[RMDB]
RNA sequence: GGGAACGACUCGAGUAGAGUCGAAAAUGUCGACGACGCACAGGCGGUUGCCUGCAGCGGCGAUGUGCAGCGCUACCAGGUCCUUGACGAGAUCACCCUGCUGGUCGACAAGUCACUGGUGAUGGCCCCAAGGGACCUGAUUCGUCAGGUCCCUUGGAAAAGAAACAACAACAACAAC
Reactivity to DMS in 0.01 (KOAc 150mM, MgCl2 10mM, bicine 150mM(pH8.5), 24C), signal-to-noise 3, nucleotides 027 to 126: u010g030u000c010g000a050c040g020a090c060g000c010a300c020a010g000g010c020g020g010u050u050g010c000c010u000g040c060a090g000c010g000g000c030g000a050u000g010u050g040c070a040g030c060g050c050u000a050c000c000a080g000g000u030c120c050u000u050g010a210c080g020a120g000a050u000c030a040c050c090c090u030g010c090u020g000g000u000c010g000a050c030a080a100g020u000c180a060c030u000g010g010u000g040a090u010g000g000c030c030
Reactivity to 2A3 in 0.01 (KOAc 150mM, MgCl2 10mM, bicine 150mM(pH8.5), 24C), signal-to-noise 5, nucleotides 027 to 126: u120g010u030c010g000a060c000g020a040c030g030c000a020c000a020g000g030c010g210g120u170u300g010c000c010u020g010c020a020g010c000g020g030c010g040a050u060g050u040g040c090a050g000c020g000c060u040a030c010c010a010g020g050u110c010c020u060u070g040a100c060g030a020g010a130u020c000a020c030c060c000u100g040c090u050g050g000u000c010g020a030c010a020a010g020u020c010a000c140u010g000g020u040g030a200u070g060g000c000c010